RNA sequence: GGGAACGACUCGAGUAGAGUCGAAAACUUUUUGUUUGUCCUGUUCCGUCUACUUGUGCAUCCGACAGAUAACAAACAUUAGGAACCUGAGCCUUCAUUUGCUUUUACCUCAAAUUCAAGAAAUAUGUAAGCGAAAGCCAUUCGUGGCUUUCGCUUAAAAAGAAACAACAACAACAAC
Reactivity to 2A3 in 0.01 (KOAc 150mM, MgCl2 10mM, bicine 150mM(pH8.5), 24C), signal-to-noise 1, nucleotides 027 to 126: c050u000u230u000u000u210g000u000u120u100g080u030c010c010u000g000u020u020c010c000g030u000c030u040a140c130u000u000g010u020g010c080a010u000c000c000g000a000c000a030g030a170u180a070a000c020a000a220a000c020a000u180u090a120g010g010a070a000c000c000u000g000a000g000c000c000u000u010c030a050u000u030u010g000c020u010u020u260u130a080c000c000u040c050a170a070a040u010u020c090a220a110g140a170a190a060u300a030u300g010